[RMDB]
RNA sequence: GGGAACGACUCGAGUAGAGUCGAAAAGCGGCAUCGGUGGACAACCACAGUGUGAGGCCUAGUCCGACGCCGAGCGAACCGAUAACCAGCACCACAAACGGAACCUUGUUUGCCAACGUGCGCGGCCCCACCACAUGUUCUUCGGAACAUGUGGUGGAAAAGAAACAACAACAACAAC
Reactivity to DMS in 0.01 (KOAc 150mM, MgCl2 10mM, bicine 150mM(pH8.5), 24C), signal-to-noise 2, nucleotides 027 to 126: g030c030g010g000c000a050u000c060g010g000u000g000g030a120c190a110a060c010c010a130c120a200g050u010g050u000g000a100g000g050c020c020u000a150g000u000c020c000g010a120c090g000c020c020g000a110g000c050g020a070a110c030c030g000a060u020a080a090c040c040a120g010c040a040c020c030a040c110a070a080a160c040g010g020a080a120c110c050u000u000g020u000u000u000g020c050c090a060a140c100g020u000g000c060g010c030g030g020c040c040
Reactivity to 2A3 in 0.01 (KOAc 150mM, MgCl2 10mM, bicine 150mM(pH8.5), 24C), signal-to-noise 1, nucleotides 027 to 126: g020c010g050g030c060a080u020c030g000g020u050g070g000a070c080a080a100c070c020a040c050a120g090u080g030u080g140a050g100g040c030c000u040a030g090u000c040c030g000a020c040g000c000c000g040a050g080c020g000a030a000c020c000g010a000u060a070a120c030c040a030g000c020a030c050c000a050c040a080a120a000c010g010g060a080a080c000c050u100u140g000u080u110u070g000c000c040a070a050c110g040u050g010c060g010c040g050g000c000c010